[RMDB]
About this RNA: An RNA of 207 nucleotides, treated with 2A3 and read out base by base.
RNA sequence: GGGAACGACUCGAGUAGAGUCGAAAAUUUAAUAAAGCUUUGGAGCCAAAGCUGAAGGCAGUGGGAAGCGGCACUGUACUAUGGUAAAAAUGUUGCCGAUUUUCAUCCUCGCGGAUGUACACAAGUUUCCUAUAUCCUUUAAACACAAUAUGGCUAACACUCCGGUACAUUUCGAUGUACCGGAGUGAAAAGAAACAACAACAACAAC
Reactivity to 2A3 in 0.01 (KOAc 150mM, MgCl2 10mM, bicine 150mM(pH8.5), 24C), signal-to-noise 1, nucleotides 027 to 156: u020u000u080a110a090u150a100a130a020g000c010u190u000u090g130g050a070g000c050c000a000a000a000g000c050u010g010a030a000g000g070c130a050g000u000g010g000g050a010a000g030c000g000g020c010a010c130u000g000u090a050c000u050a040u200g070g000u050a000a080a000a000a160u180g110u300u000g070c000c000g000a020u090u010u020u020c030a010u030c000c000u010c090g030c060g030g000a010u000g100u040a000c030a000c000a090a020g000u000u030u000c010c040u030a050u040a200u290c090c000u150u100u040a140a080a040c070a000c030a160a120u090a120u250g000g000c010u000a040a000
Notes:
The reactions ran in a buffer of 150 mM KOAc, 10 mM MgCl2 and 150 mM bicine (pH 8.5), at 24 C. Reactivities are given for positions 27 through 156. The 2A3 profile rests on 507 reads.